[RMDB]
RNA sequence: GGGAACGACUCGAGUAGAGUCGAAAAAUAUAUUUAUACACACAUACGCAUAGAUUGUAUUCCAUAGACGAAUCGAUCACGCAUUUCGUGGCUUCCGUUUAACCAGAAGAGUAGGCUGUGCUGACACGAUCAGCUCGUUUUUCGAAACGAGCUGAUCAAAAGAAACAACAACAACAAC
Reactivity to 2A3 in 0.01 (KOAc 150mM, MgCl2 10mM, bicine 150mM(pH8.5), 24C), signal-to-noise 2, nucleotides 027 to 126: a010u060a010u060a100u110u300u140a150u100a010c010a000c000a000c000a110u100a100c040g010c040a030u000a060g040a040u000u060g000u110a050u000u040c040c000a120u120a220g040a100c080g040a030a040u030c000g010a010u000c000a000c050g070c070a010u050u180u080c040g040u020g000g010c040u070u000c000c000g040u190u000u120a130a090c000c020a070g000a060a050g060a200g030u110a030g070g020c030u020g080u110g050c000u020g000a000c020a020c100
Reactivity to DMS in 0.01 (KOAc 150mM, MgCl2 10mM, bicine 150mM(pH8.5), 24C), signal-to-noise 1, nucleotides 027 to 126: a120u000a150u000a070u100u010u000a000u050a150c030a010c100a050c100a070u000a170c010g050c060a010u000a060g000a000u030u000g030u010a090u030u000c000c060a080u030a160g000a170c260g020a030a010u000c060g000a050u040c040a270c050g000c020a130u000u040u000c060g000u000g000g080c030u000u020c000c000g010u000u000u020a120a150c010c000a110g000a090a060g000a090g040u010a100g000g000c000u000g030u000g030c000u000g020a050c200a010c140
Conditions: 150 mM KOAc, 10 mM MgCl2 and 150 mM bicine (pH 8.5), 24 C. An RNA of 177 nucleotides, treated with 2A3 and DMS and read out base by base. 2A3 adducts were read by reverse transcription with SuperScript II with manganese. For DMS, 1,140 sequencing reads were counted. In probing experiments dimethyl sulfate is read out at A N1 and C N3, which are open when not base-paired.